Record summary:
Chemical mapping of a 177-nucleotide RNA with 2A3 and DMS. The reactions ran in a buffer of 150 mM KOAc, 10 mM MgCl2 and 150 mM bicine (pH 8.5), at 24 C. It was measured as part of the RMDB libraries RFM100 and RFMREP.
RNA sequence: GGGAACGACUCGAGUAGAGUCGAAAACUGGAAUAACCCUGCCAAGUCUUAGAAGCUUUAAGAUUCAUCGCAUUGAACUUGAUACGUAUAGUACAGCACCUUGAAAACAAAUCAUCUGCUAGUUCAGCAGUAUCUUCAACUUCGGUUGAAGAUACUGAAAAGAAACAACAACAACAAC
Reactivity to 2A3 in 0.01 (KOAc 150mM, MgCl2 10mM, bicine 150mM(pH8.5), 24C), signal-to-noise 8, nucleotides 027 to 126: c010u040g060g040a070a040u080a100a080c020c010c000u010g000c030c030a070a010g030u000c020u070u140a070g020a150a020g030c010u050u120u080a070a050g030a110u060u070c020a040u070c080g020c100a080u030u070g020a060a040c020u030u040g020a040u070a090c030g060u130a050u120a200g040u040a040c010a030g030c010a070c010c030u040u090g070a060a040a030a040c060a040a110a040u060c010a010u010c010u030g020c020u040a030g040u040u040c020a020g010
Reactivity to DMS in 0.01 (KOAc 150mM, MgCl2 10mM, bicine 150mM(pH8.5), 24C), signal-to-noise 4, nucleotides 027 to 126: c070u020g010g000a170a050u020a100a060c090c020c010u000g000c020c060a090a070g020u010c020u030u010a080g000a090a120g000c050u000u000u000a080a040g000a090u000u010c050a060u010c100g000c080a030u000u040g000a040a060c040u010u000g000a080u010a030c070g020u020a060u020a060g010u000a060c060a040g010c030a010c100c030u010u010g000a030a070a070a080c190a060a050a070u020c070a010u010c060u000g010c010u000a050g000u000u000c060a060g000